[RMDB]
RNA sequence: GGGAACGACUCGAGUAGAGUCGAAAAGCGGGUAAAUACUACGGCGGCGCCGUUUCCGCGCCGGUCUUUGGUGCCAUCAUGGGCGGCGUAUUGCGUACCAUGAACAUCGAGCCGGAUGCGCUGACAAAGAUAGUAAGUUAUUCGUAACUUACUAUCUAAAAGAAACAACAACAACAAC
Reactivity to DMS in 0.01 (KOAc 150mM, MgCl2 10mM, bicine 150mM(pH8.5), 24C), signal-to-noise 9, nucleotides 027 to 126: g020c010g010g000g010u010a080a090a130u010a150c160u010a040c030g010g010c020g000g010c020g020c010c020g000u000u000u000c010c010g010c010g010c000c000g000g000u010c040u000u000u010g040g010u000g010c070c170a110u000c010a010u000g000g000g000c080g010g010c090g010u010a090u010u020g010c000g020u000a190c010c000a010u000g000a040a150c010a010u000c010g010a020g000c010c000g000g000a040u000g000c010g000c010u000g000a180c120a090a110
Reactivity to 2A3 in 0.01 (KOAc 150mM, MgCl2 10mM, bicine 150mM(pH8.5), 24C), signal-to-noise 9, nucleotides 027 to 126: g000c010g010g010g080u180a110a180a100u180a150c120u030a020c040g080g000c020g010g000c010g050c000c010g000u010u030u020c010c000g000c000g000c000c000g000g030u080c070u050u060u200g000g000u010g020c060c050a080u010c000a010u020g010g000g010c050g090g050c060g070u250a300u120u300g030c000g000u040a300c000c000a000u010g010a060a160c010a010u010c010g000a000g000c010c000g020g010a030u070g000c010g000c000u010g010a020c060a010a160
The record gives the reactivity of an RNA of 177 nucleotides to DMS and 2A3. For 2A3, 42,816 sequencing reads were counted. 2A3 adducts were read by reverse transcription with SuperScript II with manganese. The reactions ran in a buffer of 150 mM KOAc, 10 mM MgCl2 and 150 mM bicine (pH 8.5), at 24 C. Values cover nucleotides 27 to 126.